[RMDB]
RNA sequence: GGGAACGACUCGAGUAGAGUCGAAAAGAUAUGGAAUUGCCAGCUAGCUUAGUGUCGGAAACGACAUGGGAGCUUGGACCUGGCCAAUUCCUAAGUCAAAACCGUGACGACUUCGGUCGUCACGGAAUCAUAGCGUAUAGUUCGCUAUACGCUAUGAAAAAGAAACAACAACAACAAC
Reactivity to 2A3 in 0.01 (KOAc 150mM, MgCl2 10mM, bicine 150mM(pH8.5), 24C), signal-to-noise 2, nucleotides 027 to 126: g010a010u050a030u110g000g000a000a010u020u020g000c000c010a010g010c070u110a010g010c010u040u020a030g010u020g000u010c000g030g000a070a050a050c020g030a010c010a010u030g230g300g030a010g010c000u030u230g070g040a070c000c010u000g010g000c030c020a000a010u000u000c000c000u010a080a020g050u010c010a020a010a090a190c010c010g010u000g000a000c010g000a000c000u070u130c300g140g000u000c000g000u000c000a000c000g010g000a000a030
Reactivity to DMS in 0.01 (KOAc 150mM, MgCl2 10mM, bicine 150mM(pH8.5), 24C), signal-to-noise 9, nucleotides 027 to 126: g000a040u000a300u010g010g000a020a020u000u000g010c000c010a010g000c050u000a020g020c000u010u000a300g010u000g000u000c010g010g010a050a060a170c000g000a010c000a010u000g000g010g000a010g010c010u000u010g040g000a090c300c010u000g010g000c120c180a010a020u000u000c000c000u000a030a120g010u000c020a110a090a140a180c010c000g000u000g000a010c000g000a030c010u000u010c270g030g010u000c010g000u000c000a000c000g000g000a020a030